[RMDB]
RNA sequence: GGGAACGACUCGAGUAGAGUCGAAAACCUCACUACAUUUUACUGUUCCUAAAGAAUUUGUGACAGUUACAGUAAAACGUAUUGCAAGGUUUAUCAGUUCCUAUAAACAGGUAAAUAACAAUAUAUGAAAAGCAAAGACUGUUCGCAGUCUUUGCAACUUUAGUCAUAGGUUCGCCUAUGACUAAAGAAAAGAAACAACAACAACAAC
Reactivity to DMS in 0.01 (KOAc 150mM, MgCl2 10mM, bicine 150mM(pH8.5), 24C), signal-to-noise 2, nucleotides 027 to 156: c000c000u010c040a000c050u000a000c010a040u010u000u000u000a000c000u000g010u000u000c090c010u000a070a180a200g010a120a270u010u000u000g040u010g000a160c260a070g020u000u000a030c010a020g030u000a010a010a030a000c010g030u000a000u000u000g050c060a090a020g000g040u000u000u000a170u000c180a140g020u000u000c010c020u000a140u010a070a110a140c090a100g040g020u000a060a040a140u000a040a090c010a070a110u000a170u010a090u010g000a100a070a170a220g050c010a000a010a000g000a050c000u000g050u000u020c300g090c010a020g030u000c000u000u000u000g000c050a000a040
Reactivity to 2A3 in 0.01 (KOAc 150mM, MgCl2 10mM, bicine 150mM(pH8.5), 24C), signal-to-noise 6, nucleotides 027 to 156: c000c000u000c000a000c020u000a000c000a050u000u000u010u010a010c010u000g010u020u050c020c010u110a130a170a070g140a290a300u280u230u300g120u130g060a060c080a050g000u000u010a000c000a000g000u000a000a010a010a000c020g000u010a010u020u040g000c070a080a050g020g000u020u020u020a150u120c020a020g000u020u000c000c000u040a060u170a080a110a010c080a020g080g070u090a080a140a030u190a180a110c060a100a040u100a030u070a030u260g080a100a100a030a020g000c000a010a000a000g000a000c000u000g010u040u040c180g000c080a000g000u000c000u000u000u000g000c000a000a000